[RMDB]
RNA sequence: GGGAACGACUCGAGUAGAGUCGAAAAGUAUCCAUGUUCGCAUGGAUACGAAAUAUGCGCGCGUAUAUGCGGUUGGCUGGAUGCGCGCGUCUGGCUGGCCGGUGGUGCUAGUCUUCGGACUAGCAAAAGAUUCGACGAUAUUCGUAUCGUCGAAUCUAAAAGAAACAACAACAACAAC
Reactivity to 2A3 in 0.01 (KOAc 150mM, MgCl2 10mM, bicine 150mM(pH8.5), 24C), signal-to-noise 1, nucleotides 027 to 126: g000u000a010u010c000c010a000u010g030u000u080c250g020c150a020u000g000g010a000u000a010c010g000a000a010a010u160a050u060g040c030g020c000g000c030g040u070a060u020a040u300g160c040g020g070u000u010g050g000c020u020g060g030a010u010g040c050g000c000g000c000g040u010c010u000g010g030c020u030g000g010c010c000g030g060u120g030g060u070g010c000u000a000g010u000c030u000u010c180g070g010a000c010u000a010g020c000a060a000a010
Reactivity to DMS in 0.01 (KOAc 150mM, MgCl2 10mM, bicine 150mM(pH8.5), 24C), signal-to-noise 1, nucleotides 027 to 126: g010u000a000u000c000c010a010u000g000u000u010c170g040c020a000u000g000g010a020u000a010c010g000a040a040a120u000a030u000g010c030g020c050g000c040g010u000a050u000a080u000g020c010g020g020u010u000g020g020c000u000g020g010a020u000g010c020g000c090g010c000g010u000c040u000g020g000c020u010g010g000c000c010g010g000u010g020g030u000g010c000u010a000g000u000c000u020u000c180g020g000a030c000u000a000g010c000a020a030a060

Source: RMDB library M2PK50, as collected in RNAgym. Structure probing data (2A3 and DMS) for a 177-nucleotide construct. Reactivities are rounded to 0.1 and cut off at 0 and 3. For DMS the reverse transcriptase was MarathonRT. The RNA was probed in 150 mM KOAc, 10 mM MgCl2 and 150 mM bicine (pH 8.5) at 24 C.